[RMDB]
This 207-nucleotide RNA was probed chemically with 2A3 and DMS. 2A3 adducts were read by reverse transcription with SuperScript II with manganese. DMS adducts were read by reverse transcription with MarathonRT. It was measured as part of the RMDB library M2RFPK. The RNA was probed in 150 mM KOAc, 10 mM MgCl2 and 150 mM bicine (pH 8.5) at 24 C. Reactivities are given for positions 27 through 156.

RNA sequence: GGGAACGACUCGAGUAGAGUCGAAAAGUCCACGCUGGGUAAUGGACGACGGCGGCGUGUGGCGAACAGGGAUACCGGUAGUCAGUGUCUGGAACAUCCCAAGGGGCGGCGGAGCUAGCACCCCGACAAAACGGGCACAAGUUCGCUUGUGCCCGAACAUGAUGAGUUUGUUCGCAAACUCAUCAUGAAAAGAAACAACAACAACAAC
Reactivity to 2A3 in 0.01 (KOAc 150mM, MgCl2 10mM, bicine 150mM(pH8.5), 24C), signal-to-noise 4, nucleotides 027 to 156: g000u020c010c000a020c020g030c030u020g000g020g080u130a130a120u140g100g070a050c080g000a010c030g050g070c000g000g010c020g000u030g070u180g020g000c020g020a060a030c090a080g030g010g000a010u030a100c020c000g020g060u080a040g060u040c080a020g020u010g020u110c040u060g030g010a050a050c010a070u020c000c020c040a040a090g010g000g000g000c080g020g000c040g050g070a090g090c040u030a010g000c010a030c000c000c010c000g020a000c040a010a070a030a010c000g000g000g000c000a000c000a000a010g020u050u080c120g010c120u010u000g000u000g000c000c000c000g000a000a000
Reactivity to DMS in 0.01 (KOAc 150mM, MgCl2 10mM, bicine 150mM(pH8.5), 24C), signal-to-noise 1, nucleotides 027 to 156: g010u000c000c000a030c030g040c010u040g020g000g000u000a080a120u000g000g000a060c080g000a060c020g000g010c060g030g000c040g000u010g000u000g030g000c000g010a050a140c040a130g000g000g030a090u010a110c060c040g000g010u010a140g000u000c020a080g000u010g000u010c020u000g020g010a060a140c110a110u010c020c000c010a110a120g000g000g040g010c090g040g000c030g030g010a170g020c040u000a060g030c060a050c000c000c020c000g010a090c110a040a060a140a180c020g030g020g020c020a020c010a020a050g000u000u010c300g000c010u010u000g000u000g000c000c000c000g000a010a010